[RMDB]
RNA sequence: GGGAACGACUCGAGUAGAGUCGAAAAGGUCAGGACAGCUCUUCCCGGCUUAAGGGUUGAGCCCAGGUGGCUUCCGGCUUACCGGACACGUCGUGUGGUGCCGAAGCUCUGACGAGAGGGGUGCGGAUACUUACCCAUGAUUCGUCAUGGGUAAGUAAAAAGAAACAACAACAACAAC
Reactivity to 2A3 in 0.01 (KOAc 150mM, MgCl2 10mM, bicine 150mM(pH8.5), 24C), signal-to-noise 9, nucleotides 027 to 126: g070g010u040c010a000g030g060a070c020a040g010c010u000c010u030u020c000c000c000g030g020c080u130u210a070a100g000g000g000u020u020g020a010g020c000c010c010a070g010g070u100g030g000c000u030u010c060c030g010g010c030u060u120a090c010c010g060g010a040c030a010c060g300u230c090g010u100g070u090g080g030u030g020c010c010g010a020a010g000c010u010c020u050g030a040c030g010a010g010a010g060g010g000g010u080g020c040g020g020a010
Reactivity to DMS in 0.01 (KOAc 150mM, MgCl2 10mM, bicine 150mM(pH8.5), 24C), signal-to-noise 9, nucleotides 027 to 126: g010g000u010c020a030g000g010a140c220a200g010c010u000c020u000u000c010c010c010g010g000c220u020u030a090a130g000g000g000u010u000g000a030g000c010c040c070a090g010g020u020g010g000c020u010u000c070c040g010g000c070u010u020a050c020c010g010g020a050c100a070c170g000u020c140g010u000g000u020g000g020u010g010c010c010g000a050a060g010c020u000c020u010g000a050c040g000a110g000a100g000g000g000g010u010g010c070g010g010a210